RNA sequence: GGGAACGACUCGAGUAGAGUCGAAAACAGCCUCUUAUCAGGGCACCAUGGGCCGCAGCGGGGAUACCCAUAGCCUGGGUCUCAACGGUUCCGCUUUGGACCGCCGCCUGAACUGGGACGUACGCCACAGAUUCCUCAGGUUCGCCUGAGGAAUCUGAAAAGAAACAACAACAACAAC
Reactivity to DMS in 0.01 (KOAc 150mM, MgCl2 10mM, bicine 150mM(pH8.5), 24C), signal-to-noise 1, nucleotides 027 to 126: c160a110g000c000c000u040c050u040u030a050u000c140a130g000g010g020c000a040c000c000a040u000g000g000g020c110c010g020c140a110g000c030g060g000g050g020a050u040a030c000c010c000a050u080a120g020c220c090u020g010g000g000u000c140u040c050a170a120c010g020g010u000u000c000c080g010c170u000u030u010g040g000a020c040c010g060c020c090g050c000c040u000g040a000a100c040u040g000g010g050a060c060g000u000a120c060g000c070c030a250
Reactivity to 2A3 in 0.01 (KOAc 150mM, MgCl2 10mM, bicine 150mM(pH8.5), 24C), signal-to-noise 2, nucleotides 027 to 126: c030a020g040c010c010u060c040u060u140a150u110c080a020g030g000g000c000a010c020c020a070u100g030g000g000c010c010g050c060a030g030c040g030g000g000g010a020u060a080c000c000c000a010u030a010g030c030c030u000g000g000g010u010c030u010c040a040a030c040g080g000u190u100c010c020g080c000u070u130u190g020g010a050c000c040g000c020c000g000c010c000u010g010a020a010c030u030g000g000g030a000c000g070u120a040c040g040c000c000a050

Chemical mapping of a 177-nucleotide RNA with DMS and 2A3. Reactivities are given for positions 27 through 126. It was measured as part of the RMDB library OK1LIB. Conditions: 150 mM KOAc, 10 mM MgCl2 and 150 mM bicine (pH 8.5), 24 C.